[RMDB]
RNA sequence: GGGAACGACUCGAGUAGAGUCGAAAAAUCCUGGGUCAGGCGCCAAGCUCCCCAGCAUCAUGCAGGAAGCUGCAGCCCCGCAGAGUUAGGACAGCUCAUUUGGCACCCGGCGAGCCCUUCCCAGGCCUUAAAUCAUCCGGUUCGCCGGAUGAUUUAAAAAAGAAACAACAACAACAAC
Reactivity to DMS in 0.01 (KOAc 150mM, MgCl2 10mM, bicine 150mM(pH8.5), 24C), signal-to-noise 4, nucleotides 027 to 126: a060u020c010c000u000g010g040g020u020c120a100g030g000c040g020c040c070a110a110g000c030u000c040c040c010c090a130g000c060a140u020c140a090u020g010c030a080g000g000a100a070g020c000u010g000c040a120g010c020c030c000c030g010c070a110g000a080g000u000u020a100g020g000a110c090a050g010c020u010c030a110u010u020u020g000g000c040a080c010c010c010g000g000c050g010a090g000c010c010c060u020u000c000c000c000a170g010g010c110c050
Reactivity to 2A3 in 0.01 (KOAc 150mM, MgCl2 10mM, bicine 150mM(pH8.5), 24C), signal-to-noise 3, nucleotides 027 to 126: a010u030c010c000u020g000g000g000u050c080a050g060g030c010g020c040c030a030a010g040c000u020c000c010c010c020a010g040c000a040u220c020a030u160g020c010a010g020g030a070a050g030c020u030g020c010a030g000c010c020c000c010g030c050a040g010a030g060u070u120a040g040g070a030c010a030g020c010u030c070a090u050u040u160g050g010c010a040c020c010c000g000g000c020g010a030g000c010c010c000u000u030c040c000c010a040g050g030c000c010